Source: RMDB library RNAMAK, as collected in RNAgym. Chemical mapping of a 207-nucleotide RNA with 2A3. Values cover nucleotides 27 to 156. The reactions ran in a buffer of 150 mM KOAc, 10 mM MgCl2 and 150 mM bicine (pH 8.5), at 24 C. For 2A3 the reverse transcriptase was SuperScript II with manganese.
RNA sequence: GGGAACGACUCGAGUAGAGUCGAAAAACAUUCACUUUCGAGUGAAUGUAAAAAUCCUAAGUCAUCUAUCACGCCUUAAGGGAGUCGGAAACGACUUUGAUCUUAAGGAACUACGUGACGAUGAUAUGGAAAAAACGAGGUGGUUCGCCACCUCGAAGUAAGCGGUAAACUUCGGUUUACCGCUUACAAAAGAAACAACAACAACAAC
Reactivity to 2A3 in 0.01 (KOAc 150mM, MgCl2 10mM, bicine 150mM(pH8.5), 24C), signal-to-noise 2, nucleotides 027 to 156: a010c000a010u010u000c000a000c010u090u120u100c200g030a020g010u000g010a010a000u010g000u000a000a020a010a000a000u040c010c000u010a070a010g030u000c000a000u010c040u100a140u070c000a000c010g000c000c000u010u010a000a000g000g000g000a000g030u000c000g010g080a110a070a030c040g060a030c000u160u040u020g070a060u020c000u000u030a000a000g010g040a010a030c040u220a020c030g000u000g000a030c020g000a010u010g000a000u030a060u030g050g000a130a110a050a000a000a000c030g030a000g000g010u010g000g060u070u040c270g060c080c000a000c000c020u000c010g020a010a010